[RMDB]
Chemical mapping of a 177-nucleotide RNA with DMS and 2A3. The reactions ran in a buffer of 150 mM KOAc, 10 mM MgCl2 and 150 mM bicine (pH 8.5), at 24 C. 2A3 adducts were read by reverse transcription with SuperScript II with manganese. DMS adducts were read by reverse transcription with MarathonRT.
RNA sequence: GGGAACGACUCGAGUAGAGUCGAAAAGUUAACGUGCAAUGCUCAUUGGCAGGACUUACCAAGUCUGGGGGCCGAUGAGGGUUGGCUCAAAGUAGGGUUUUGACUUGAAAACUCAAGCUGUGACCCCCAUCUCCUCGAUAUUCGUAUCGAGGAGAUGAAAAGAAACAACAACAACAAC
Reactivity to DMS in 0.01 (KOAc 150mM, MgCl2 10mM, bicine 150mM(pH8.5), 24C), signal-to-noise 4, nucleotides 027 to 126: g000u010u010a050a070c150g020u000g000c020a020a010u000g000c010u010c010a010u010u000g000g060c010a090g000g000a020c010u000u000a120c300c300a070a050g010u000c000u000g010g020g050g010g000c010c000g000a000u000g000a010g000g000g010u000u000g000g020c050u010c070a070a050a100g000u000a080g010g000g000u000u000u000u010g010a090c090u020u010g000a080a070a070a060c080u000c000a050a040g020c010u000g000u010g010a170c020c000c020c160
Reactivity to 2A3 in 0.01 (KOAc 150mM, MgCl2 10mM, bicine 150mM(pH8.5), 24C), signal-to-noise 9, nucleotides 027 to 126: g110u080u090a080a020c070g020u030g000c000a020a020u060g170c000u000c000a000u010u000g010g000c010a020g010g000a000c010u030u070a220c070c210a070a000g000u000c000u030g040g010g030g170g000c000c000g000a000u000g000a000g000g020g010u000u000g060g050c020u020c100a070a100a020g040u060a050g040g100g040u030u030u080u050g120a140c030u030u080g050a060a050a100a080c060u020c020a020a000g000c030u040g050u120g110a110c000c000c000c000